[RMDB]
Overview: Conditions: 150 mM KOAc, 10 mM MgCl2 and 150 mM bicine (pH 8.5), 24 C. Structure probing data (2A3 and DMS) for a 177-nucleotide construct.
RNA sequence: GGGAACGACUCGAGUAGAGUCGAAAAGAUAUGGAUUAGUUGUUGGGAGGGAAACGGUCGGAAACGACCGCGAAUCCCGAGGAUCAACACCUAAUCCUAAGUCAAAAGCGCAUGUUCGCAUGCGCAACGCUUAAUUACCGUUCGCGGUAAUUAAGCGAAAAGAAACAACAACAACAAC
Reactivity to 2A3 in 0.01 (KOAc 150mM, MgCl2 10mM, bicine 150mM(pH8.5), 24C), signal-to-noise 1, nucleotides 027 to 126: g020a020u090a040u200g000g000a010u000u000a010g000u000u040g030u000u000g020g000g020a070g000g020g050a020a140a030c010g030g000u000c000g020g000a100a060a040c000g000a010c000c020g000c030g080a050a160u000c000c000c010g020a040g000g030a020u030c000a010a010c000a000c000c000u000a000a000u010c000c000u000a120a020g050u000c050a020a010a190a080g000c000g010c010a000u020g020u100u190c300g000c210a000u010g030c020g000c010a000a000
Reactivity to DMS in 0.01 (KOAc 150mM, MgCl2 10mM, bicine 150mM(pH8.5), 24C), signal-to-noise 2, nucleotides 027 to 126: g000a010u000a300u010g000g000a000u000u000a000g000u000u000g000u000u000g000g000g000a040g030g000g000a040a110a050c010g000g000u010c010g000g010a120a090a300c010g000a000c000c000g020c030g000a220a180u000c000c000c010g040a070g010g020a070u000c020a000a020c010a040c050c000u000a030a000u000c020c000u000a020a090g020u000c050a060a110a110a130g010c010g010c010a010u000g020u000u000c270g020c010a010u000g000c010g000c030a030a040

Reactivities are rounded to 0.1 and cut off at 0 and 3.